[RMDB]
RNA sequence: GGGAACGACUCGAGUAGAGUCGAAAAAUACAAGGGGAGGUUUCGGCCAAAUGUUGUAUGCAGAAAGCGUGAGGAAGGUAGCACUUAGACAGUCACGAGUAGCGGUUCGGCAGUAGUGCUAAAAUGAGACAGUACGAAAAGUUCGCUUUUCGUACAACUCUUACGCAAUGUUCGCAUUGCGUAAGAGAAAAGAAACAACAACAACAAC
Reactivity to 2A3 in 0.01 (KOAc 150mM, MgCl2 10mM, bicine 150mM(pH8.5), 24C), signal-to-noise 4, nucleotides 027 to 156: a000u170a040c060a050a020g020g000g010g000a050g010g020u020u040u030c050g070g000c030c010a050a080a030u140g010u090u000g040u050a040u070g020c020a010g050a060a060a010g060c090g040u080g030a070g030g040a050a020g050g010u060a040g020c000a000c020u010u020a030g020a060c050a020g020u030c040a010c090g010a010g020u060a020g070c080g060g000u070u080c050g040g000c020a030g030u170a020g020u010g040c020u070a050a040a030a090u140g000a010g010a040c080a100g010u000a000c010g000a000a000a000a000g030u030u090c160g040c060u000u000u000u000c000g000u000a000c000a000a010
Reactivity to DMS in 0.01 (KOAc 150mM, MgCl2 10mM, bicine 150mM(pH8.5), 24C), signal-to-noise 2, nucleotides 027 to 156: a070u010a110c040a070a040g020g010g000g010a090g030g020u000u000u000c040g020g020c010c020a090a080a150u000g000u000u010g040u000a130u000g020c050a070g000a040a060a090g020c080g050u000g000a100g000g000a040a050g000g040u000a110g020c030a050c030u010u010a100g010a090c070a050g030u000c030a070c080g020a080g030u000a060g010c060g020g030u000u010c030g030g010c060a090g020u010a030g030u020g020c010u000a040a040a040a080u000g020a180g030a090c080a070g000u010a030c010g010a030a000a030a020g000u000u000c300g010c010u000u000u000u000c000g060u000a010c000a050a090